[RMDB]
RNA sequence: GGGAACGACUCGAGUAGAGUCGAAAAGAGUGAUCCUGCGCCGAAAAUGAUUGGCGAUCAAGCGUUAUACCGAAGCUCUGGACUUUGCCGCAAGGCAGAGUGGUAGAAGAGCGUUGCAUGCGCGUCGUUUGAACAUAUGUUUCGACAUAUGUUCAAAAAAAGAAACAACAACAACAAC
Reactivity to 2A3 in 0.01 (KOAc 150mM, MgCl2 10mM, bicine 150mM(pH8.5), 24C), signal-to-noise 9, nucleotides 027 to 126: g120a020g070u150g040a070u030c010c010u040g020c010g000c000c010g090a060a050a040a080u270g060a230u080u100g020g000c010g000a040u090c060a080a040g000c010g030u120u160a080u050a110c050c060g070a060a010g000c000u000c000u010g010g030a010c000u010u010u010g010c000c010g030c050a050a040g000g000c000a000g000a000g000u050g040g090u150a100g040a170a010g000a010g000c020g000u020u080g040c040a030u070g010c010g000c000g060u090c030g030
Reactivity to DMS in 0.01 (KOAc 150mM, MgCl2 10mM, bicine 150mM(pH8.5), 24C), signal-to-noise 9, nucleotides 027 to 126: g000a100g020u020g010a090u010c020c020u000g020c030g020c010c010g010a040a080a120a110u080g010a140u010u010g000g010c020g010a090u020c140a090a110g010c020g010u000u020a070u010a100c220c070g010a070a110g010c010u000c000u000g000g010a020c000u000u000u000g010c000c000g000c290a090a110g000g020c000a000g000a000g000u000g010g010u020a090g010a100a030g010a020g010c000g010u000u010g010c140a050u000g000c020g000c020g010u020c130g020